[RMDB]
RNA sequence: GGGAACGACUCGAGUAGAGUCGAAAAUGUCACACAGUAGCGAGCGAUGCAAUUAAUUGCAUCUACACCAAGCUCAAGGCUUGGAUUUCGACUAGUGUCGAGUCGUUCCCACUCGCUACGCCCACAAACACAGGAAUAUCUUCGGAUAUUCCUGUGUAAAAGAAACAACAACAACAAC
Reactivity to DMS in 0.01 (KOAc 150mM, MgCl2 10mM, bicine 150mM(pH8.5), 24C), signal-to-noise 3, nucleotides 027 to 126: u020g020u000c220a100c190a130c160a090g040u000a030g000c000g000a000g020c170g010a010u000g000c010a000a050u000u010a070a080u000u000g020c000a010u000c000u000a070c070a250c000c010a000a010g010c000u010c160a120a090g010g010c010u010u000g010g010a160u000u000u000c000g010a000c010u000a040g020u000g030u000c000g000a000g010u000c010g000u000u000c000c010c000a000c000u000c000g000c010u000a030c020g010c020c020c040a060c170a080a080
Structure probing data (DMS) for a 177-nucleotide construct. It was measured as part of the RMDB library M2PK90.